This 177-nucleotide RNA was probed chemically with 2A3 and DMS. Reactivities are given for positions 27 through 126. For DMS the reverse transcriptase was MarathonRT. The reactions ran in a buffer of 150 mM KOAc, 10 mM MgCl2 and 150 mM bicine (pH 8.5), at 24 C.
RNA sequence: GGGAACGACUCGAGUAGAGUCGAAAAGAUAUGGAAAUUUGUGGCUAGCUGCGCCAUCGGAAACGAUGGAGUGGCAGCUUGGACCCACACUGAUUUCCUAAGUCAAACACACAGUUCGCUGUGUGAACUAUGAUGAGGACUUCGGUCCUCAUCAUAGAAAAGAAACAACAACAACAAC
Reactivity to 2A3 in 0.01 (KOAc 150mM, MgCl2 10mM, bicine 150mM(pH8.5), 24C), signal-to-noise 1, nucleotides 027 to 126: g000a010u010a020u150g000g090a010a030a000u170u190u200g030u000g020g000c030u010a030g020c000u000g000c020g000c010c000a020u000c000g000g020a060a030a000c000g000a000u000g010g030a010g050u200g220g000c030a000g000c000u000u140g010g010a000c000c040c000a000c000a010c090u210g060a060u020u010u000c020c000u000a050a010g010u000c050a000a170a090c020a000c000a000c000a010g010u090u100c220g150c240u000g000u000g000u010g010a030a030
Reactivity to DMS in 0.01 (KOAc 150mM, MgCl2 10mM, bicine 150mM(pH8.5), 24C), signal-to-noise 3, nucleotides 027 to 126: g000a020u000a130u010g000g010a000a000a020u000u010u010g030u010g010g000c000u000a020g010c000u000g000c020g000c000c000a000u000c010g000g010a070a020a090c000g020a030u000g010g010a030g000u020g010g010c000a010g000c000u000u010g010g000a050c300c000c010a020c000a090c300u010g010a040u000u000u000c000c000u000a030a210g010u000c010a150a140a210c020a020c010a010c000a010g030u000u020c300g030c000u000g000u000g000u000g000a050a290